[RMDB]
The data come from the RNA Mapping Database (RMDB), library OK3TST. This 207-nucleotide RNA was probed chemically with 2A3 and DMS.
RNA sequence: GGGAACGACUCGAGUAGAGUCGAAAAGGAUCUGAGUACUUAUAAGUGCGAAGUGAGUGAGGGUCUUACGAGCACUAAUUACAACCCUCUAUUAAGUAUCGAAGAUCGGCCGGAGAUCGAGAUACAACUAUUAGCCGGCGACUGUACGAAGAUCCGACGACCUAUACCUAUUCGUAGGUAUAGGUCGAAAAGAAACAACAACAACAAC
Reactivity to 2A3 in 0.01 (KOAc 150mM, MgCl2 10mM, bicine 150mM(pH8.5), 24C), signal-to-noise 6, nucleotides 027 to 156: g000g000a000u000c000u000g020a000g020u010a020c010u100u140a130u080a300a040g000u010g010c010g040a090a010g000u000g010a000g000u070g000a000g000g000g010u090c000u000u000a000c000g000a000g000c010a010c050u150a120a110u180u110a050c060a030a010c000c020c000u000c000u010a110u080u130a120a060g000u000a000u020c010g030a060a020g010a030u010c050g040g000c010c000g000g010a120g000a010u010c020g000a000g000a060u010a010c010a040a000c030u090a060u270u110a070g080c010c000g020g000c010g070a080c060u090g000u000a000c000g000a000a000g000a000u000c000c010g000a000
Reactivity to DMS in 0.01 (KOAc 150mM, MgCl2 10mM, bicine 150mM(pH8.5), 24C), signal-to-noise 2, nucleotides 027 to 156: g010g000a000u010c010u000g000a300g000u010a020c030u000u030a110u010a100a110g030u000g010c020g000a130a190g010u030g000a070g020u010g020a090g010g030g010u000c020u000u000a070c010g000a300g000c000a040c010u000a050a050u000u000a090c080a060a040c010c010c000u010c030u000a150u010u010a040a140g010u000a030u000c030g010a210a300g030a080u010c020g050g050c100c080g030g030a300g000a050u010c010g000a300g030a080u000a010c030a090a140c180u020a100u000u000a160g000c050c000g000g000c030g030a110c100u010g020u000a010c040g010a210a090g010a090u020c000c010g040a130

Background
Values cover nucleotides 27 to 156. For 2A3, 4,888 sequencing reads were counted.